[RMDB]
Chemical mapping of a 177-nucleotide RNA with DMS and 2A3.
RNA sequence: GGGAACGACUCGAGUAGAGUCGAAAACUUGCAAGAUAAGACUGGCGACUUUAUGUCUACAAUUAUUACUUCCUGCCAAACUGCUGUUAGUAAGCUUCUAGAUACAUGUUUUGAAGCUACAGAAGCACUCGAUGUAUUAGUUCGCUAAUACAUCGAGAAAAGAAACAACAACAACAAC
Reactivity to DMS in 0.01 (KOAc 150mM, MgCl2 10mM, bicine 150mM(pH8.5), 24C), signal-to-noise 3, nucleotides 027 to 126: c080u000u010g040c100a020a050g030a050u000a120a090g000a110c030u000g000g010c100g010a120c050u000u010u000a040u020g020u000c010u000a100c030a040a040u000u000a150u020u030a120c090u000u000c010c020u000g010c070c200a070a130a160c250u000g000c010u010g000u020u000a090g000u000a050a070g010c000u000u000c020u000a020g000a030u000a080c230a110u010g000u010u000u000u000g000a010a020g000c000u000a020c030a070g000a140a040g010c080a090
Reactivity to 2A3 in 0.01 (KOAc 150mM, MgCl2 10mM, bicine 150mM(pH8.5), 24C), signal-to-noise 4, nucleotides 027 to 126: c010u020u090g010c040a050a010g020a140u060a050a040g030a040c030u000g030g010c010g050a020c030u130u160u090a070u240g010u010c000u020a020c030a020a040u110u070a050u080u020a110c040u030u000c000c000u010g050c020c010a060a060a060c070u060g020c010u020g020u100u020a040g010u030a150a020g000c000u020u010c030u020a020g010a070u090a150c140a110u250g050u030u080u030u030g010a000a000g000c010u010a010c000a010g060a050a000g000c010a010
The reactions ran in a buffer of 150 mM KOAc, 10 mM MgCl2 and 150 mM bicine (pH 8.5), at 24 C. For 2A3 the reverse transcriptase was SuperScript II with manganese.